This 207-nucleotide RNA was probed chemically with 2A3. It was measured as part of the RMDB library OK3TST.
RNA sequence: GGGAACGACUCGAGUAGAGUCGAAAAGGUGUCGUGCUGCGGGUGAGCAAGCUCGGUGAGGCCGACCGUAUCGUCACCCUGCUGACCCGCCGGUACGGCAAGGUGCGCGCGGUGGCCAAGGGAGUGCGCCGGACCGGUUCCAGAUUCGGGGCACGGCCCCGCCUGCUAAGUUCGCUUAGCAGGCGGGAAAAGAAACAACAACAACAAC
Reactivity to 2A3 in 0.01 (KOAc 150mM, MgCl2 10mM, bicine 150mM(pH8.5), 24C), signal-to-noise 1, nucleotides 027 to 156: g100g010u040g020u070c040g000u020g000c010u030g080c040g110g000g030u110g000a070g010c010a100a080g050c060u100c050g120g040u070g050a050g080g000c040c020g070a030c050c010g100u130a210u140c020g080u060c010a040c000c000c030u010g020c000u020g060a000c000c000c010g080c050c090g060g000u120a170c000g000g000c000a020a010g020g020u110g000c080g000c000g000c000g010g010u010g000g080c010c010a040a070g010g000g000a010g020u060g020c020g040c050c000g000g080a050c000c000g000g090u110u010c010c020a030g020a100u170u090c070g000g030g000g000c020a010c000g010g000c000